[RMDB]
RNA sequence: GGGAACGACUCGAGUAGAGUCGAAAAGGCGAAUAUUGCGCAAUAAAAGGAUACCAUAAGCAACGACGCCGCAUGAGGGAUGAAGGCACUCGAAUGGUAAUACUCUCUAAGCAGGGACGAGGAGCCAAUUAUAAUUGUUAUUCGUAACAAUUAUAAUAAAAGAAACAACAACAACAAC
Reactivity to 2A3 in 0.01 (KOAc 150mM, MgCl2 10mM, bicine 150mM(pH8.5), 24C), signal-to-noise 9, nucleotides 027 to 126: g030g000c010g030a060a030u120a080u140u120g040c040g010c070a050a100u160a180a120a040a030g120g020a060u080a130c010c010a050u050a110a040g020c000a020a030c020g100a010c020g010c020c000g030c050a060u120g050a050g030g050g010a010u100g070a090a080g030g000c010a010c020u020c010g050a090a070u080g030g000u040a030a020u080a120c010u030c000u000c020u080a100a050g030c040a030g080g010g040a030c020g010a030g030g020a030g010c010c000a010
Reactivity to DMS in 0.01 (KOAc 150mM, MgCl2 10mM, bicine 150mM(pH8.5), 24C), signal-to-noise 9, nucleotides 027 to 126: g000g010c010g000a070a120u030a200u010u010g010c010g010c170a120a100u040a060a070a100a120g010g010a120u010a060c050c060a090u010a090a080g000c010a010a030c070g000a300c050g010c010c010g000c120a070u020g010a090g000g020g010a100u020g010a110a090g000g010c030a110c030u000c020g010a100a100u020g000g000u010a050a070u030a140c080u010c010u000c030u010a090a130g020c170a050g000g000g010a180c030g010a040g000g010a130g010c010c020a060
Record summary: Chemical mapping of a 177-nucleotide RNA with 2A3 and DMS. It was measured as part of the RMDB library OK1LIB.